[RMDB]
RNA sequence: GGGAACGACUCGAGUAGAGUCGAAAACAUGGAUCGUUCGCGAUCCAUGGCAGGUGGUGGUGGGACCAGCCGACCCAGCCUUUUGGCAUCCCAGCCUUUCCAAUCCAGCCUAUUUCGAUAGGCUGAAGUGACAAUAGGCCUUCGGGCCUAUUGUCACAAAAGAAACAACAACAACAAC
Reactivity to DMS in 0.01 (KOAc 150mM, MgCl2 10mM, bicine 150mM(pH8.5), 24C), signal-to-noise 1, nucleotides 027 to 126: c000a000u000g000g000a010u000c000g010u000u000c300g040c020g000a000u000c000c030a020u010g000g030c160a000g000g010u000g010g060u030g000g050u020g020g000g000a120c050c100a120g010c060c020g000a070c070c000c010a300g000c010c030u000u000u000u000g020g050c000a150u000c000c010c020a220g000c020c000u010u000u010c050c030a130a200u030c140c000a000g010c020c000u000a010u000u000u020c190g000a010u000a010g010g030c020u000g000a000a040